Structure probing data (DMS and 2A3) for a 177-nucleotide construct. The data come from the RNA Mapping Database (RMDB), libraries RFM100 and RFMREP. The 2A3 profile rests on 3,272 reads. Reactivities are given for positions 27 through 126.
[RMDB]
RNA sequence: GGGAACGACUCGAGUAGAGUCGAAAAUGAUGAGCAUGGCCGUUCUUAGGUGUAAGCCCUGCCGGUUGUCUUGAUAGACAAAAUUUUACCGAGACUUGUAAUAGCCAAAAGCAGGCAGCAGGCGAGUCCUAUAGCAGUUCUUCGGAACUGCUAUAGGAAAAGAAACAACAACAACAAC
Reactivity to DMS in 0.01 (KOAc 150mM, MgCl2 10mM, bicine 150mM(pH8.5), 24C), signal-to-noise 2, nucleotides 027 to 126: u030g020a020u020g000a070g040c000a040u000g000g000c020c010g000u010u010c040u000u000a070g000g040u020g040u050a080a070g010c080c030c000u000g000c010c020g000g010u000u000g010u020c030u000u020g010a080u050a010g010a000c020a060a020a080a120u010u100u030u040a170c060c000g000a150g000a160c010u040u010g020u010a070a040u000a060g000c170c220a040a080a140a130g000c020a010g000g000c040a110g000c030a020g000g000c010g000a220g000u010
Reactivity to 2A3 in 0.01 (KOAc 150mM, MgCl2 10mM, bicine 150mM(pH8.5), 24C), signal-to-noise 5, nucleotides 027 to 126: u190g040a030u070g020a010g060c070a080u080g070g010c010c020g080u080u040c020u040u070a120g020g040u060g030u080a020a060g060c010c000c000u020g020c010c000g040g000u070u070g000u010c010u050u180g090a090u190a090g010a000c040a010a090a020a060u190u220u050u050a060c010c000g000a010g050a090c000u030u030g040u060a070a090u020a130g070c010c010a040a060a020a030g060c010a000g040g000c020a020g020c010a000g010g000c020g010a020g050u000